[RMDB]
RNA sequence: GGGAACGACUCGAGUAGAGUCGAAAAAGCGCGUCCCCGGUAGGUUUGCGGGUGGCCUACCGGAGGGCGUCAGAGACACCCGCUCGGGCUACUCGGUCGCACGGGGCUGAGUAGCUGACACCUAACCCGUGCUACCCUCGGGGAGCUUGCCCGUGGGCCAUUAGUACGUGUUCGCACGUACUAAUGGAAAAGAAACAACAACAACAAC
Reactivity to 2A3 in 0.01 (KOAc 150mM, MgCl2 10mM, bicine 150mM(pH8.5), 24C), signal-to-noise 3, nucleotides 027 to 156: a000g170c100g000c000g030u030c000c010c000c000g010g010u000a000g020g000u000u020u140g010c000g010g000g000u010g000g010c000c000u000a000c020c020g020g000a100g010g010g000c000g020u010c000a020g010a020g020a020c000a000c010c000c000g030c000u020c100g010g000g010c000u010a000c000u000c000g010g000u010c040g000c010a000c000g000g000g000g000c000u010g000a000g010u000a000g000c000u000g000a000c000a080c000c030u110a110a060c000c000c000g000u000g000c000u000a020c000c000c020u030c020g000g000g000g020a150g160c120u160u120g080c010c000c000g000u020g000g000g000

Structure probing data (2A3) for a 207-nucleotide construct. Source: RMDB library RSTRND, as collected in RNAgym.